[RMDB]
RNA sequence: GGGAACGACUCGAGUAGAGUCGAAAAGUAGUCCCGGACGAAUUAGAAUUUAACGUACGGUUUGGACAUAAUGGAGAAAUAAAAUAUUGCUCUUUUUGCAGCGGAGCUGAACUUUAUGUUCUCUUUGUUAGAACUAAUCCUUCGGGAUUAGUUCUAAAAAAGAAACAACAACAACAAC
Reactivity to DMS in 0.01 (KOAc 150mM, MgCl2 10mM, bicine 150mM(pH8.5), 24C), signal-to-noise 3, nucleotides 027 to 126: g010u020a070g000u000c010c000c000g000g020a040c020g000a100a080u010u000a060g030a150a060u030u020u030a040a140c020g040u000a060c060g000g010u000u000u020g000g000a040c000a050u030a050a040u000g000g000a080g020a030a090a070u060a060a020a040a100u050a100u030u020g000c020u010c010u010u010u000u020u010g000c170a080g010c270g000g000a030g010c010u020g020a040a110c140u010u010u020a020u010g000u000u000c030u000c010u000u000u000g010
Reactivity to 2A3 in 0.01 (KOAc 150mM, MgCl2 10mM, bicine 150mM(pH8.5), 24C), signal-to-noise 4, nucleotides 027 to 126: g150u170a010g020u000c030c000c000g010g060a010c020g030a030a060u100u050a070g130a170a090u140u180u150a130a070c020g000u030a030c060g030g070u050u150u190g060g000a010c030a030u150a070a080u130g010g050a040g050a050a040a010u140a020a090a100a040u190a090u110u200g010c010u030c000u030u120u040u220u270g090c100a060g040c020g030g000a000g040c030u040g040a050a000c000u010u100u080a080u070g020u000u030c030u000c000u060u010u050g040

This 177-nucleotide RNA was probed chemically with DMS and 2A3. 2A3 adducts were read by reverse transcription with SuperScript II with manganese. Source: RMDB libraries RFM100 and RFMREP, as collected in RNAgym.